[RMDB]
Chemical mapping of a 207-nucleotide RNA with 2A3 and DMS. Reactivities are given for positions 27 through 156. The DMS profile rests on 2,198 reads. It was measured as part of the RMDB library ARCHII. For 2A3, 871 sequencing reads were counted. For DMS the reverse transcriptase was MarathonRT.
RNA sequence: GGGAACGACUCGAGUAGAGUCGAAAAGGCAACUGGCAGUUAAACCGUGUAGUACCGAUGGAGGUUGGAAACAAUGCACAUCACUACCGGGUCUUGGGCAGUGCGAUAGCGAUGGGAUUCACCUUCGCAGGAUGUGCAUGGAAGUAUAAACACAACGCUGAGAGAUAAGCUUCGGCUUAUCUCUCAGAAAAGAAACAACAACAACAAC
Reactivity to 2A3 in 0.01 (KOAc 150mM, MgCl2 10mM, bicine 150mM(pH8.5), 24C), signal-to-noise 1, nucleotides 027 to 156: g030g000c020a050a020c030u020g020g020c010a030g010u150u150a150a050a020c020c050g030u000g000u050a010g040u020a020c110c020g030a030u070g020g090a100g000g070u080u010g010g030a090a030a000c060a060a060u000g020c010a000c000a020u010c000a000c050u020a020c060c010g000g010g010u010c010u080u160g010g020g000c030a030g020u040g070c010g010a080u110a040g050c010g000a000u020g030g000g040a130u120u230c100a120c090c000u010u000c000g010c000a000g020g000a030u000g020u010g010c010a020u100g020g020a100a000g050u040a080u120a140a110a030c070a000c010a190a080c080g010
Reactivity to DMS in 0.01 (KOAc 150mM, MgCl2 10mM, bicine 150mM(pH8.5), 24C), signal-to-noise 1, nucleotides 027 to 156: g030g070c000a090a150c040u010g010g040c020a050g020u000u000a010a080a030c040c000g000u090g000u010a090g010u000a060c000c040g030a110u010g010g010a060g020g000u030u010g010g000a210a090a140c080a070a070u000g000c020a050c040a030u000c040a240c010u000a020c020c050g060g000g010u000c050u000u000g030g060g000c000a090g040u010g040c090g020a190u000a060g040c070g020a050u000g010g040g010a280u000u000c060a090c010c000u000u000c030g070c010a150g020g000a040u000g000u000g000c020a060u010g040g010a070a130g000u000a180u000a030a090a090c040a000c060a020a090c120g000